An RNA of 177 nucleotides, treated with 2A3 and DMS and read out base by base. The reactions ran in a buffer of 150 mM KOAc, 10 mM MgCl2 and 150 mM bicine (pH 8.5), at 24 C. For DMS the reverse transcriptase was MarathonRT.
RNA sequence: GGGAACGACUCGAGUAGAGUCGAAAAUGAGAUAGAGUCUCACUCUGUCGCCCAGGCUGGAGUGCAAUGGCGCGAUCUCGGCUCACUGCAACCUCCACCUUGUGGGUUCAAGAGAUUCUCCUGCCUCUACCACAGAUGUAUUCGUACAUCUGUGGUAAAAAGAAACAACAACAACAAC
Reactivity to 2A3 in 0.01 (KOAc 150mM, MgCl2 10mM, bicine 150mM(pH8.5), 24C), signal-to-noise 5, nucleotides 027 to 126: u110g000a030g010a020u080a120g190a060g120u040c010u000c060a030c010u040c010u040g060u080c050g000c030c020c000a000g040g000c090u050g000g010a020g010u080g000c010a010a050u090g070g000c110g000c060g280a290u050c120u050c170g110g000c030u040c040a030c010u020g020c000a050a170c030c010u030c010c010a020c000c030u040u100g220u120g070g030g020u060u120c080a110a000g010a010g000a030u070u030c040u030c030c010u050g020c000c010u070c050
Reactivity to DMS in 0.01 (KOAc 150mM, MgCl2 10mM, bicine 150mM(pH8.5), 24C), signal-to-noise 6, nucleotides 027 to 126: u010g010a080g010a060u000a080g010a130g020u000c070u000c100a150c020u000c030u000g010u000c150g000c010c010c010a070g010g000c180u010g020g000a030g030u000g000c050a030a020u000g010g010c100g010c060g000a060u000c110u010c080g000g000c000u000c020a020c040u000g000c030a040a080c210c010u000c020c010a050c070c050u010u000g020u000g010g010g010u000u000c150a080a040g000a050g000a140u000u000c030u000c000c040u000g010c070c040u000c100